[RMDB]
RNA sequence: GGGAACGACUCGAGUAGAGUCGAAAACUUCGAAGCUAGAGGAGAUCAGAGUCAGUCUCCUAGCUUCGAUCGACUAGGAGACUUCAGAGCUAGAGCUCUAGGAGAAGAGUCAGUCGAAGCUAGGACUGAAGUCUCUCGACUGAUCCUGAAGGAAGUCGCCGUGCAUAAGAUUCGUCUUAUGCACGGCAAAAGAAACAACAACAACAAC
Reactivity to 2A3 in 0.01 (KOAc 150mM, MgCl2 10mM, bicine 150mM(pH8.5), 24C), signal-to-noise 2, nucleotides 027 to 156: c030u040u030c030g130a130a040g040c040u060a040g020a050g150g010a100g010a060u050c020a030g030a010g130u030c030a000g020u010c030u040c120c030u000a000g000c010u030u010c000g000a020u040c020g000a000c010u060a060g210g010a100g080a080c010u020u000c020a000g000a010g030c010u230a050g060a070g170c020u030c000u140a200g010g040a010g110a050a050g050a050g030u000c010a000g000u000c000g000a000a000g010c000u000a000g010g010a010c010u010g000a040a020g030u000c030u020c000u000c120g040a050c030u060g030a050u010c000c020u050g030a060a020g080g040a040a020g080u080c100
Structure probing data (2A3) for a 207-nucleotide construct. The 2A3 profile rests on 1,344 reads. The RNA was probed in 150 mM KOAc, 10 mM MgCl2 and 150 mM bicine (pH 8.5) at 24 C. It was measured as part of the RMDB library OK3TST. For 2A3 the reverse transcriptase was SuperScript II with manganese.